Conditions: 150 mM KOAc, 10 mM MgCl2 and 150 mM bicine (pH 8.5), 24 C. An RNA of 177 nucleotides, treated with DMS and 2A3 and read out base by base. DMS adducts were read by reverse transcription with MarathonRT. For 2A3 the reverse transcriptase was SuperScript II with manganese. Reactivities are rounded to 0.1 and cut off at 0 and 3. Source: RMDB library M2PK90, as collected in RNAgym.
[RMDB]
RNA sequence: GGGAACGACUCGAGUAGAGUCGAAAAAUAAAUGAUGAGUUAACGCUCAUCAAUGUAACGAAAGAUGGCGAUUCGGUACACAUGGAAACAUGCGCCAAACGGAUAAAUACACAGAAUCCGAAAAAAACGUAAAGUCAUAGUUCGCUAUGACUUUACGAAAAGAAACAACAACAACAAC
Reactivity to DMS in 0.01 (KOAc 150mM, MgCl2 10mM, bicine 150mM(pH8.5), 24C), signal-to-noise 3, nucleotides 027 to 126: a050u000a050a100a110u010g010a010u000g000a010g000u010u010a160a160c290g000c010u010c000a000u000c000a060a070u000g000u010a030a040c030g000a040a050a110g000a140u010g000g020c020g010a170u000u000c030g010g000u010a050c010a110c020a060u000g000g000a100a080a090c050a010u000g000c030g000c020c010a030a090a180c070g010g000a070u000a050a060a110u010a060c240a080c250a120g000a070a030u000c000c030g010a000a000a010a080a070a070a140
Reactivity to 2A3 in 0.01 (KOAc 150mM, MgCl2 10mM, bicine 150mM(pH8.5), 24C), signal-to-noise 2, nucleotides 027 to 126: a010u070a000a050a070u050g000a010u000g010a010g030u070u120a070a020c070g010c020u010c030a000u000c000a000a000u020g000u010a070a040c040g030a200a020a060g130a070u100g010g000c020g030a050u050u030c020g030g030u020a010c040a000c000a070u050g010g060a020a110a050c020a030u130g050c010g000c020c040a030a020a000c010g000g000a010u030a090a180a020u300a070c120a010c010a100g150a050a030u000c000c000g110a190a120a000a000a000a010a000